An RNA of 177 nucleotides, treated with DMS and read out base by base. For DMS the reverse transcriptase was MarathonRT. Conditions: 150 mM KOAc, 10 mM MgCl2 and 150 mM bicine (pH 8.5), 24 C. Reactivities are given for positions 27 through 126. The data come from the RNA Mapping Database (RMDB), library OK2TST.
[RMDB]
RNA sequence: GGGAACGACUCGAGUAGAGUCGAAAAAAUGUGUUGAAGAUACUGCAGUCAUUUUUGUAAAGACCUUGCUGAAUGUUUCCAAUAGACUAAAUACUGUUUAGGCCGCAGGAGAGUUUGGAAUCCGGAAAUGAAAUUUAGGGUUCGCCCUAAAUUUCAUAAAAGAAACAACAACAACAAC
Reactivity to DMS in 0.01 (KOAc 150mM, MgCl2 10mM, bicine 150mM(pH8.5), 24C), signal-to-noise 1, nucleotides 027 to 126: a040a040u010g040u010g020u020u000g020a090a180g000a130u000a040c070u000g040c030a080g010u010c060a030u020u000u000u000u030g020u020a110a110a120g000a040c060c020u000u000g020c020u000g000a070a050u000g020u000u000u000c010c030a080a140u000a110g000a060c090u000a030a070a080u000a080c120u020g000u010u000u000a090g010g010c070c080g010c070a030g010g020a110g030a040g000u000u000u000g010g000a080a040u000c060c050g000g000a060a130